[RMDB]
RNA sequence: GGGAACGACUCGAGUAGAGUCGAAAAGUGCCAGAGAAGUUGUAUAUUGGGCUACCAUCCAGUGAUGCAAUGGAGGCUUAUUAGGGUUGUCAGUUUUCCACAGGGUAGCAAUUAAAACUGUCUGAAAGUUCAAGAUACUUUUCGAAGUAUCUUGAACAAAAGAAACAACAACAACAAC
Reactivity to DMS in 0.01 (KOAc 150mM, MgCl2 10mM, bicine 150mM(pH8.5), 24C), signal-to-noise 8, nucleotides 027 to 126: g010u030g040c010c010a290g000a130g010a110a160g010u000u000g010u000a020u010a060u000u000g000g010g010c010u000a010c010c010a120u010c030c020a030g010u000g010a040u000g000c020a010a010u000g000g010a050g030g020c030u010u020a080u020u020a110g000g000g000u000u000g000u000c000a000g000u000u000u030u010c000c000a100c070a110g000g010g000u000a020g010c010a050a100u040u020a010a010a050a010c000u000g010u000c010u030g000a090a100a080
Reactivity to 2A3 in 0.01 (KOAc 150mM, MgCl2 10mM, bicine 150mM(pH8.5), 24C), signal-to-noise 8, nucleotides 027 to 126: g100u090g010c010c000a070g010a000g010a300a010g010u020u020g020u030a040u020a030u130u070g020g010g000c000u010a020c000c010a040u150c010c000a040g040u110g160a030u040g010c010a010a010u020g020g020a020g020g000c030u060u100a200u100u160a130g170g000g000u000u000g010u020c010a000g010u010u030u210u090c030c010a080c020a060g000g000g050u010a000g010c000a000a000u020u000a010a000a000a010c000u000g010u000c000u000g050a070a080a010
Structure probing data (DMS and 2A3) for a 177-nucleotide construct. For DMS the reverse transcriptase was MarathonRT. The RNA was probed in 150 mM KOAc, 10 mM MgCl2 and 150 mM bicine (pH 8.5) at 24 C.